RNA sequence: GGGAACGACUCGAGUAGAGUCGAAAACUGUGUUUUUAACAGCUGACACGUGCAUUAAUAGAUAUUCACCAUUUACGUAAUCCCGGGAAGAUACAUGUGUAUCUUGACUGCACUGUGGGGAUGCGGGCUUCUGGAUCCACUUCGGUGGAUCCAGAAGAAAAGAAACAACAACAACAAC
Reactivity to 2A3 in 0.01 (KOAc 150mM, MgCl2 10mM, bicine 150mM(pH8.5), 24C), signal-to-noise 2, nucleotides 027 to 126: c020u010g030u000g110u140u060u000u000u070a130a070c050a000g080c000u040g090a030c010a000c120g020u020g010c010a000u090u070a230a030u200a100g080a030u180a000u000u090c030a180c180c010a100u070u110u290a160c140g050u120a130a030u110c000c000c000g110g000g000a020a010g000a000u010a030c030a040u300g180u140g000u120a000u000c000u000u000g110a120c040u010g010c010a020c040u000g000u020g000g040g050g030a010u040g050c000g090g060g000

This 177-nucleotide RNA was probed chemically with 2A3. For 2A3 the reverse transcriptase was SuperScript II with manganese. Source: RMDB library OK1LIB, as collected in RNAgym. Conditions: 150 mM KOAc, 10 mM MgCl2 and 150 mM bicine (pH 8.5), 24 C.